[RMDB]
RNA sequence: GGGAACGACUCGAGUAGAGUCGAAAAGAGACAGAGUCUCGCUCUGUUGCCCAGGCUGGAGUGCAGUGGUGUGACCUCAGCUUACUGCAACCUCCGCUUCCUGGAUUCAAGUGAUUCUCCUGCCUCACACCGCACAAGGAUUCGUCCUUGUGCGGUGAAAAGAAACAACAACAACAAC
Reactivity to DMS in 0.01 (KOAc 150mM, MgCl2 10mM, bicine 150mM(pH8.5), 24C), signal-to-noise 1, nucleotides 027 to 126: g010a020g000a050c020a050g010a080g000u000c030u010c080g030c020u000c130u020g020u000u000g060c160c000c020a080g020g030c300u000g000g040a010g020u000g010c000a000g040u010g010g030u000g000u000g000a300c070c010u000c020a180g010c000u000u000a070c000u000g030c000a030a060c250c000u000c000c020g000c150u000u000c000c000u000g000g000a170u010u000c060a010a070g000u000g000a020u000u000c010u000c040c030u000g000c020c000u000c040a280
Reactivity to 2A3 in 0.01 (KOAc 150mM, MgCl2 10mM, bicine 150mM(pH8.5), 24C), signal-to-noise 1, nucleotides 027 to 126: g010a000g030a000c000a010g020a000g050u030c010u010c030g010c010u160c120u060g060u050u060g070c030c010c000a000g060g000c070u160g000g030a030g040u070g000c000a020g000u010g030g010u030g010u030g140a080c000c010u040c020a000g000c000u060u230a020c000u000g000c010a080a180c000c020u000c000c020g000c060u100u120c020c010u020g060g000a040u030u040c000a030a020g000u000g010a000u000u000c000u040c010c020u030g000c030c000u000c010a010